[RMDB]
RNA sequence: GGGAACGACUCGAGUAGAGUCGAAAAGCCGAGAUGGCAGACAAGUACUACGAGGCCACACCUCAGAGCUCUGUGGAGAUGAGGCUGAUGACCACCAUGGGCAUGAACAUGGCCGUGUUUAUGCUGGGUAUCGGAACGUGUUCGCACGUUCCGAUACAAAAGAAACAACAACAACAAC
Reactivity to DMS in 0.01 (KOAc 150mM, MgCl2 10mM, bicine 150mM(pH8.5), 24C), signal-to-noise 2, nucleotides 027 to 126: g050c010c010g000a170g000a100u000g000g010c010a050g010a050c110a080a040g000u000a080c110u000a140c190g000a130g000g000c020c020a060c100a120c040c000u000c020a030g000a190g010c010u000c000u010g020u020g020g010a050g000a080u020g010a060g010g000c260u000g010a100u000g010a050c020c050a130c090c030a110u010g000g000g020c010a030u010g010a000a010c020a040u010g010g020c160c100g010u000g000u000u000u000a020u030g010c000u000g040g000
Reactivity to 2A3 in 0.01 (KOAc 150mM, MgCl2 10mM, bicine 150mM(pH8.5), 24C), signal-to-noise 2, nucleotides 027 to 126: g000c000c020g000a030g060a100u260g020g050c020a000g020a060c060a100a060g020u060a070c040u050a050c040g040a040g000g000c040c000a010c000a020c050c030u030c030a030g050a040g040c020u000c050u160g180u170g190g030a070g040a080u020g030a010g060g000c120u060g040a190u080g050a030c010c010a020c000c030a130u150g070g020g030c030a030u020g000a020a000c010a000u030g180g020c000c090g040u010g000u020u010u000a000u020g000c000u030g120g000